RNA sequence: GGGAACGACUCGAGUAGAGUCGAAAAGAAAGGCAGCAAGUGCAGCCCACGCAGCGGCAUGCUUUUGCAUGCCCAGUCGAGCCCACGACUAAGGGCAGCUGCGGCACUGAGGGCAGCUGCCGAAAGAAUUAUUAUUUAGGUUCGCCUAAAUAAUAAUAAAAGAAACAACAACAACAAC
Reactivity to 2A3 in 0.01 (KOAc 150mM, MgCl2 10mM, bicine 150mM(pH8.5), 24C), signal-to-noise 4, nucleotides 027 to 126: g070a020a070a020g000g020c010a000g010c030a010a220g120u130g160c070a030g030c030c020c000a010c020g040c010a010g010c010g050g000c010a010u020g010c000u210u300u220u300g000c010a010u010g000c000c000c000a010g030u010c010g010a020g000c000c000c010a020c020g070a010c030u070a070a110g040g020g000c010a020g000c010u020g000c000g030g000c080a070c150u140g070a130g000g030g000c000a000g000c010u000g000c000c000g010a010a010a010g020a030
Reactivity to DMS in 0.01 (KOAc 150mM, MgCl2 10mM, bicine 150mM(pH8.5), 24C), signal-to-noise 8, nucleotides 027 to 126: g000a100a110a150g000g020c010a010g020c020a130a120g020u010g020c160a090g010c030c040c040a140c060g010c050a040g020c050g010g010c020a020u000g000c020u010u010u000u000g020c000a060u000g010c000c010c050a040g010u000c040g000a150g010c010c000c010a290c030g010a050c040u010a120a110g020g000g010c120a090g010c020u000g010c020g000g000c150a090c160u010g000a090g010g010g020c030a090g000c010u000g010c010c000g010a020a050a090g010a150